Structure probing data (2A3 and DMS) for a 207-nucleotide construct.
DMS adducts were read by reverse transcription with MarathonRT.
Source: RMDB library M2RFPK, as collected in RNAgym.
[RMDB]
RNA sequence: GGGAACGACUCGAGUAGAGUCGAAAAAGCCACCGCUACGGCGGUGGUAAGUAGAAAAGUUGGUGCUUAGACCACGCCCUCUACCGUAAUAAUAGAUAAAUAGGCGAGUAUCAGUACGCUGAUACAAAAAACACUCACACGUUCGCGUGUGAGUGAACAUCCAUGUUAAGUUCGCUUAACAUGGAUGAAAAGAAACAACAACAACAAC
Reactivity to 2A3 in 0.01 (KOAc 150mM, MgCl2 10mM, bicine 150mM(pH8.5), 24C), signal-to-noise 6, nucleotides 027 to 156: a000g010c000c010a010c000c010g020c010u040a020c220g150g000c000g000g010u010g000g010u000a010a000g010u010a000g020a010a030a010a000g030u080u040g020g010u080g060c200u270u130a030g050a080c010c000a000c010g010c000c010c000u000c010u000a040c020c020g070u030a050a040u080a160a030u070a160g160a060u120a120a130a060u110a060g030g030c050g020a020g010u000a000u010c000a000g000u040a020c220g020c080u000g000a000u030a010c060a000a150a000a000a000a000c010a000c000u000c000a000c000a000c000g010u050u060c210g010c000g100u010g000u000g000a000g000u000g000a010a000
Reactivity to DMS in 0.01 (KOAc 150mM, MgCl2 10mM, bicine 150mM(pH8.5), 24C), signal-to-noise 2, nucleotides 027 to 156: a220g000c000c000a000c000c000g050c010u000a030c220g140g020c000g000g050u010g020g030u000a010a030g010u000a100g030a110a120a050a100g010u000u010g010g000u000g010c080u010u020a110g010a110c000c020a060c000g020c010c010c040u000c020u000a010c000c010g030u000a100a140u000a140a190u010a100g010a030u000a040a060a030u020a050g010g000c020g020a080g000u010a020u010c010a020g000u000a070c300g050c010u000g010a020u000a040c010a000a020a040a150a110a150c000a000c000u000c000a020c000a020c000g020u000u000c300g050c040g000u000g030u020g000a010g030u000g000a010a130